[RMDB]
The data come from the RNA Mapping Database (RMDB), library OK1LIB. This 177-nucleotide RNA was probed chemically with 2A3 and DMS. Values cover nucleotides 27 to 126. The DMS profile rests on 4,035 reads. For DMS the reverse transcriptase was MarathonRT.

RNA sequence: GGGAACGACUCGAGUAGAGUCGAAAAGAAGCAUGCUUCCAGGCCCGGAUGCAUGGCAGACGAAAGAAACAGCCGAGGCCGAACGAUCUUAUCAGGCUGGAUAUGAUCGGAAAGAAAGUCUGGAAAAGGAUUACACUAUCUUCGGAUAGUGUAAUCCAAAAGAAACAACAACAACAAC
Reactivity to 2A3 in 0.01 (KOAc 150mM, MgCl2 10mM, bicine 150mM(pH8.5), 24C), signal-to-noise 4, nucleotides 027 to 126: g100a020a030g010c000a020u040g000c000u040u000c010c000a040g030g000c010c000c000g000g000a030u050g000c000a010u030g110g000c010a040g040a060c050g130a050a010a200g130a020a120a020c010a010g030c010c020g030a080g030g000c000c000g000a050a010c000g000a010u010c010u030u030a030u020c010a040g300g010c130u140g020g020a000u000a010u030g020a010u010c010g010g030a120a030a020g080a070a100a010g020u020c030u050g020g010a020a070a010a080
Reactivity to DMS in 0.01 (KOAc 150mM, MgCl2 10mM, bicine 150mM(pH8.5), 24C), signal-to-noise 3, nucleotides 027 to 126: g010a150a160g010c000a030u010g010c000u020u000c000c000a130g010g000c040c020c060g000g000a030u010g010c000a010u000g010g040c040a050g000a060c090g010a190a070a120g000a150a100a090c050a080g000c040c050g020a090g000g020c020c020g000a190a130c060g010a010u000c010u010u020a030u000c000a070g010g010c190u000g000g000a000u000a000u000g000a020u000c020g010g000a090a060a110g000a110a120a240g020u000c010u000g000g010a090a030a090a120